The data come from the RNA Mapping Database (RMDB), library M2RFPK.
Chemical mapping of a 207-nucleotide RNA with 2A3 and DMS.
The reactions ran in a buffer of 150 mM KOAc, 10 mM MgCl2 and 150 mM bicine (pH 8.5), at 24 C.
The 2A3 profile rests on 1,914 reads.
Reactivities are given for positions 27 through 156.
2A3 adducts were read by reverse transcription with SuperScript II with manganese.
The DMS profile rests on 2,846 reads.
RNA sequence: GGGAACGACUCGAGUAGAGUCGAAAAAUAGAGAUUGGAGUCAUACAACCCCAGAAACCAUUCCUUAUACCUUCAGUAUUGCUGAAUUCAGUUUAGCGUGCAUGCUCUUGGCUAUUCUCAUAGUGAUAAAAUCUGUAGUCCUUCGGGACUACAGAAACAUCAUUCACGUGUUCGCACGUGAAUGAUGAAAAGAAACAACAACAACAAC
Reactivity to 2A3 in 0.01 (KOAc 150mM, MgCl2 10mM, bicine 150mM(pH8.5), 24C), signal-to-noise 3, nucleotides 027 to 156: a000u110a010g050a010g010a000u070u140g060g010a030g040u060c040a030u080a200c030a050a090c020c010c000c030a020g110a060a050a010c030c030a030u030u090c020c020u060u060a060u050a150c010c010u030u050c010a020g020u050a100u180u230g020c010u040g030a070a040u060u150c050a090g060u020u060u110a030g020c040g020u040g000c030a050u040g020c010u000c000u050u050g020g000c020u040a050u140u060c040u030c030a110u100a060g090u040g070a050u110a130a110a020a070u010c000u000g010u000a000g000u000c010c000u000u070c140g060g010g000a000c000u000a000c000a000g000a000a000a000
Reactivity to DMS in 0.01 (KOAc 150mM, MgCl2 10mM, bicine 150mM(pH8.5), 24C), signal-to-noise 2, nucleotides 027 to 156: a070u000a070g000a060g000a120u000u000g010g000a120g010u010c030a140u000a100c110a100a160c020c000c000c030a090g000a100a080a170c040c000a170u000u000c000c000u020u000a300u000a050c050c010u000u000c040a050g000u000a090u000u000g080c000u000g000a100a110u000u000c090a060g060u000u000u000a090g010c030g040u000g000c090a110u000g030c020u000c010u000u020g030g000c020u000a090u000u000c020u010c020a120u000a140g020u010g010a160u000a020a070a080a150u020c000u000g030u000a000g000u010c000c010u000u010c300g030g000g010a000c000u000a000c000a020g000a020a010a090